[RMDB]
RNA sequence: GGGAACGACUCGAGUAGAGUCGAAAAAAUCGUCGACGCAUCGACGACGGUCCUGCCAUGAAACCGUAACGAGGACAUGUCGCCUCGAAUGGCGUCGGGGAGCCGGCAGCUUACCCCAAGGAUGAGCAAAAGAAUGAAACGUUCGCGUUUCAUUCAAGAAAGAGUAGGACUUCGGUCCUACUCUUUCAAAAGAAACAACAACAACAAC
Reactivity to 2A3 in 0.01 (KOAc 150mM, MgCl2 10mM, bicine 150mM(pH8.5), 24C), signal-to-noise 1, nucleotides 027 to 156: a000a000u190c150g090u000c000g040a000c000g030c110a060u010c040g000a000c020g000a000c000g000g010u030c000c010u000g060c040c000a080u090g020a150a070a030c040c060g020u090a070a010c010g020a000g000g030a000c020a090u190g080u070c040g040c050c030u010c000g010a010a130u050g120g000c000g010u080c040g030g010g000g010a000g080c030c000g080g110c090a000g010c010u060u140a130c000c000c000c000a000a020g150g030a030u060g010a000g050c100a070a000a020a100g000a020a010u050g000a000a000a000c000g010u050u060c180g090c000g040u030u040u000c000a000u000u000c010a010a020
The record gives the reactivity of an RNA of 207 nucleotides to 2A3. The reactions ran in a buffer of 150 mM KOAc, 10 mM MgCl2 and 150 mM bicine (pH 8.5), at 24 C. 2A3 adducts were read by reverse transcription with SuperScript II with manganese.